[RMDB]
RNA sequence: GGGAACGACUCGAGUAGAGUCGAAAACAACGUGUUCCUGUAGCUACAGGUUCAUUAACUGAAUUAACAGUAGUAUUAGAAAAACAAGACGUAACAGUUGAACAAGUUAACGAAGCUAUGAAAAAUGGUGACAUACCUAGUUCGCUAGGUAUGUCACAAAAGAAACAACAACAACAAC
Reactivity to 2A3 in 0.01 (KOAc 150mM, MgCl2 10mM, bicine 150mM(pH8.5), 24C), signal-to-noise 3, nucleotides 027 to 126: c040a000a050c040g050u040g000u070u000c000c010u000g030u040a020g040c110u160a000c000a000g030g000u010u010c010a010u090u080a140a010c020u050g080a030a130u180u080a200a060c010a020g040u100a000g060u000a090u130u300a120g160a110a080a040a000a030c070a040a070g080a000c030g040u090a120a000c100a120g070u070u080g070a120a020c080a190a000g020u090u070a040a080c050g040a050a000g010c040u050a090u140g150a100a060a020a040a000u190g040
Reactivity to DMS in 0.01 (KOAc 150mM, MgCl2 10mM, bicine 150mM(pH8.5), 24C), signal-to-noise 1, nucleotides 027 to 126: c060a000a120c130g030u000g040u000u000c000c040u040g000u000a140g050c080u060a160c100a050g060g000u000u000c050a120u000u000a000a030c000u000g000a070a300u000u010a030a090c010a030g070u000a070g020u000a060u000u000a070g010a000a160a000a040a270c130a080a050g000a040c000g030u020a040a060c030a050g000u000u000g010a040a100c040a070a060g000u000u000a050a060c090g000a100a050g000c040u000a080u070g000a020a040a000a050a040u020g000